[RMDB]
RNA sequence: GGGAACGACUCGAGUAGAGUCGAAAAGUCUGUCUCAUGGGGCGAUCUGGUGAUAGCUGUCUUGGACGGAGGGGCCGGUCUGCGGUGUGAAGGACAGCCAUAGGUUGGUGGGUAGGGUGCCUGCAUGACGCAUAGCACGAUUCGUCGUGCUAUGCGUAAAAGAAACAACAACAACAAC
Reactivity to 2A3 in 0.01 (KOAc 150mM, MgCl2 10mM, bicine 150mM(pH8.5), 24C), signal-to-noise 2, nucleotides 027 to 126: g080u080c040u030g030u000c020u020c140a190u020g010g000g000g030c040g040a010u030c070u130g110g010u110g190a110u080a050g000c000u010g000u040c020u040u130g060g000a030c000g090g020a030g050g000g000g000c030c000g000g030u130c070u010g080c010g000g100u040g060u030g160a070a010g020g020a000c020a030g010c090c000a150u100a090g130g000u070u050g120g000u120g030g000g030u040a050g000g050g050u000g020c000c000u020g000c010a020u080g030
Reactivity to DMS in 0.01 (KOAc 150mM, MgCl2 10mM, bicine 150mM(pH8.5), 24C), signal-to-noise 1, nucleotides 027 to 126: g060u000c020u000g000u000c070u010c000a060u040g020g000g000g000c000g010a120u020c100u010g020g010u030g000a100u010a070g000c000u040g000u010c020u020u010g010g030a060c090g020g000a090g000g010g000g000c040c020g000g000u070c070u020g000c000g000g000u050g030u020g000a100a080g000g000a060c060a080g000c040c020a100u040a030g020g010u020u000g000g000u020g020g000g040u030a070g000g000g000u000g020c060c040u000g000c070a070u010g020

Conditions: 150 mM KOAc, 10 mM MgCl2 and 150 mM bicine (pH 8.5), 24 C. This 177-nucleotide RNA was probed chemically with 2A3 and DMS. DMS adducts were read by reverse transcription with MarathonRT. For 2A3, 736 sequencing reads were counted. 2A3 adducts were read by reverse transcription with SuperScript II with manganese.